[RMDB]
RNA sequence: GGGAACGACUCGAGUAGAGUCGAAAAACUAGAGAUUCCGAGGUUGUUCAACGUGGCGAUACCAGGAAUAGUGUCGGGAAAACACAAGGUGAUGGGUGCGAGAGCUCUGUGGGCGUUAGGAAAGGCGUCAUGAUCUCUUAUUCGUAAGAGAUCAUGAAAAAGAAACAACAACAACAAC
Reactivity to DMS in 0.01 (KOAc 150mM, MgCl2 10mM, bicine 150mM(pH8.5), 24C), signal-to-noise 9, nucleotides 027 to 126: a100c090u010a090g010a150g010a140u000u000c010c020g010a100g010g010u000u000g020u000u000c070a090a100c140g020u000g010g010c040g010a080u010a090c050c030a110g010g010a060a060u000a070g020u000g010u000c040g010g020g000a070a060a090a060c090a050c090a070a100g010g010u000g010a070u000g010g010g010u000g010c070g010a080g010a090g000c050u000c040u000g010u000g000g010g010c050g010u010u000a060g010g000a050a070a090g010g010c090g010
Reactivity to 2A3 in 0.01 (KOAc 150mM, MgCl2 10mM, bicine 150mM(pH8.5), 24C), signal-to-noise 5, nucleotides 027 to 126: a010c070u080a050g010a010g020a130u090u000c030c020g030a080g040g010u090u060g010u100u080c070a110a060c110g040u070g040g000c050g020a020u060a100c010c040a040g050g060a030a070u060a080g060u030g060u050c040g010g010g050a020a080a060a010c090a010c030a050a050g040g020u070g040a100u080g030g030g020u050g030c040g010a070g000a000g020c010u000c050u080g050u090g010g040g000c050g030u040u050a040g010g040a060a040a020g050g000c010g040

An RNA of 177 nucleotides, treated with DMS and 2A3 and read out base by base.
The 2A3 profile rests on 9,774 reads.
For DMS the reverse transcriptase was MarathonRT.
As a SHAPE reagent, 2A3 marks flexible, mostly unpaired nucleotides at the ribose 2'-OH.
For 2A3 the reverse transcriptase was SuperScript II with manganese.
For DMS, 22,543 sequencing reads were counted.